RNA sequence: GGGAACGACUCGAGUAGAGUCGAAAACUAGGUGAUCCAUGGAUCUGUCUAGCUAGGUACAGCAUAGUACCACUAGCAUGGCACUAGGGAUCAUGAUCCAUGUCAGAGUACCGUACCGUACGCGACGCGUGCUACUUAGUUUCGACUAAGUAGCACGAAAAGAAACAACAACAACAAC
Reactivity to DMS in 0.01 (KOAc 150mM, MgCl2 10mM, bicine 150mM(pH8.5), 24C), signal-to-noise 9, nucleotides 027 to 126: c110u000a080g020g030u000g000a030u000c030c000a060u000g010g000a070u000c060u000g000u010c020u000a150g020c110u010a060g010g000u000a010c000a170g020c250a140u010a100g000u000a010c010c030a130c110u000a010g010c060a100u000g010g010c190a070c020u000a070g010g010g000a030u000c030a040u000g000a100u000c040c050a070u010g000u000c040a090g010a130g010u000a030c020c120g010u010a070c160c130g010u000a020c060g000c170g000a050c090g010
Reactivity to 2A3 in 0.01 (KOAc 150mM, MgCl2 10mM, bicine 150mM(pH8.5), 24C), signal-to-noise 9, nucleotides 027 to 126: c040u060a070g230g000u020g010a020u000c010c010a030u070g050g000a090u040c040u060g070u030c010u020a030g020c050u070a080g020g000u010a010c020a060g130c080a300u140a280g010u010a010c010c020a010c030u010a010g000c040a050u040g020g000c050a020c100u040a060g070g020g000a020u040c010a030u080g030a040u010c050c060a070u120g030u020c040a020g060a040g200u020a030c010c040g050u110a100c030c070g010u030a020c050g040c030g050a010c020g010

Structure probing data (DMS and 2A3) for a 177-nucleotide construct. It was measured as part of the RMDB library OK2TRN. The DMS profile rests on 18,606 reads. The reactions ran in a buffer of 150 mM KOAc, 10 mM MgCl2 and 150 mM bicine (pH 8.5), at 24 C.